[RMDB]
RNA sequence: GGGAACGACUCGAGUAGAGUCGAAAACAUUACGAAUUCAGUCGCAAAUUGUAGAAGUAGCUACUCUACGAUUUAGUGAGCGUUAGUAACGUUGUAAUAUAAUAUAGUCUUUGGAAGGAUUAUAUUGGAGCCGCGGACAAGUUCGCUUGUCCGCGAACUGGUUUAACUUCUUCGGAAGUUAAACCAGAAAAGAAACAACAACAACAAC
Reactivity to 2A3 in 0.01 (KOAc 150mM, MgCl2 10mM, bicine 150mM(pH8.5), 24C), signal-to-noise 2, nucleotides 027 to 156: c060a060u140u140a040c040g070a100a160u160u140c060a080g060u040c000g000c010a020a020a030u030u010g010u000a010g010a180a010g050u060a060g010c060u060a030c000u010c000u000a010c000g010a000u000u010u100a070g010u000g000a080g140c020g010u040u060a050g030u060a060a070c060g000u000u010g030u080a140a140u060a060u030a150a000u000a000u000a030g000u000c040u030u170u180g110g060a120a110g010g010a010u020u020a000u010a000u010u020g030g030a100g060c080c010g000c030g000g000a000c000a010a000g000u040u120c220g060c100u000u000g000u000c000c000g000c000g000a000a030
Notes:
The record gives the reactivity of an RNA of 207 nucleotides to 2A3. The data come from the RNA Mapping Database (RMDB), library M2RFPK. 2A3 adducts were read by reverse transcription with SuperScript II with manganese. The reactions ran in a buffer of 150 mM KOAc, 10 mM MgCl2 and 150 mM bicine (pH 8.5), at 24 C. For 2A3, 741 sequencing reads were counted. Values are in units of 0.01, from 0 to 300, in steps of 10.